The record gives the reactivity of an RNA of 177 nucleotides to 2A3 and DMS. The data come from the RNA Mapping Database (RMDB), library OK2TRN. The 2A3 profile rests on 7,914 reads.
[RMDB]
RNA sequence: GGGAACGACUCGAGUAGAGUCGAAAACACUCAGUCUCUGACUCACUCUCUCUGACACAGUGACUGUGAGUCUGUCAGACUGACUCAGAGAGACACACUGAGAGACACACACAGUGAGUGACAGUCACCUAUAGUGCUGGUUCGCCAGCACUAUAGGAAAAGAAACAACAACAACAAC
Reactivity to 2A3 in 0.01 (KOAc 150mM, MgCl2 10mM, bicine 150mM(pH8.5), 24C), signal-to-noise 4, nucleotides 027 to 126: c030a000c010u030c000a020g030u010c000u000c010u050g070a040c000u010c030a030c000u010c010u000c000u000c010u020g080a070c050a020c030a240g030u020g060a040c020u030g020u030g030a050g060u040c030u070g050u030c030a020g050a130c030u010g020a010c010u000c010a010g000a000g000a000g010a040c010a010c010a010c150u040g030a020g000a000g040a050c020a000c010a000c010a010c010a180g110u060g120a040g020u030g030a060c030a030g060u100c020a030
Reactivity to DMS in 0.01 (KOAc 150mM, MgCl2 10mM, bicine 150mM(pH8.5), 24C), signal-to-noise 6, nucleotides 027 to 126: c040a100c090u000c020a050g010u000c000u010c020u000g000a030c020u000c050a130c090u000c060u000c000u000c010u010g010a100c150a160c100a050g010u000g010a060c030u000g010u010g010a060g010u000c000u000g010u010c100a050g010a080c030u000g020a100c130u010c020a020g000a060g000a080g000a060c130a100c120a050c060u000g000a020g000a090g000a060c040a080c140a080c130a070c160a100g010u000g010a050g020u000g010a130c100a090g010u010c110a220
For DMS, 6,781 sequencing reads were counted. The RNA was probed in 150 mM KOAc, 10 mM MgCl2 and 150 mM bicine (pH 8.5) at 24 C. High 2A3 reactivity points to a flexible backbone, as in loops and unpaired stretches.